Chemical mapping of a 177-nucleotide RNA with DMS and 2A3.
[RMDB]
RNA sequence: GGGAACGACUCGAGUAGAGUCGAAAAACGAGAAGGCCAAGACCGAGGCCGAGCGCAAGGCCGAGCGCCGCGCCGCUGCCGCCAAGGCCAGGCCGGAAGCCGGCCAGGCCCCGCGCGAAGAAGAGGACGUAAGCUGUUUUUUCGAAAACAGCUUACGAAAAGAAACAACAACAACAAC
Reactivity to DMS in 0.01 (KOAc 150mM, MgCl2 10mM, bicine 150mM(pH8.5), 24C), signal-to-noise 3, nucleotides 027 to 126: a200c090g030a070g000a110a160g000g010c000c030a070a180g020a160c090c050g000a050g000g020c000c000g000a080g010c010g020c030a120a120g000g000c000c050g020a100g010c000g000c010c050g040c170g000c010c020g000c090u020g000c050c050g000c080c080a140a140g000g000c010c090a040g000g000c000c000g000g000a130a120g020c080c000g010g000c010c000a030g020g000c000c020c070c140g020c100g000c010g000a130a040g000a050a040g000a180g000g010a150
Reactivity to 2A3 in 0.01 (KOAc 150mM, MgCl2 10mM, bicine 150mM(pH8.5), 24C), signal-to-noise 2, nucleotides 027 to 126: a030c090g000a020g030a110a080g040g000c000c020a030a010g080a060c020c040g040a120g000g000c000c010g000a010g010c000g000c040a050a120g010g000c000c020g060a110g080c040g020c020c020g040c000g000c010c010g060c070u060g020c000c000g020c080c060a060a010g020g000c000c010a010g020g000c010c000g020g010a030a010g050c030c010g000g000c000c000a030g030g000c000c000c000c020g020c000g000c010g030a040a110g020a060a020g040a110g070g030a000
Notes: Reactivities are given for positions 27 through 126. The data come from the RNA Mapping Database (RMDB), library RFM100. For 2A3 the reverse transcriptase was SuperScript II with manganese.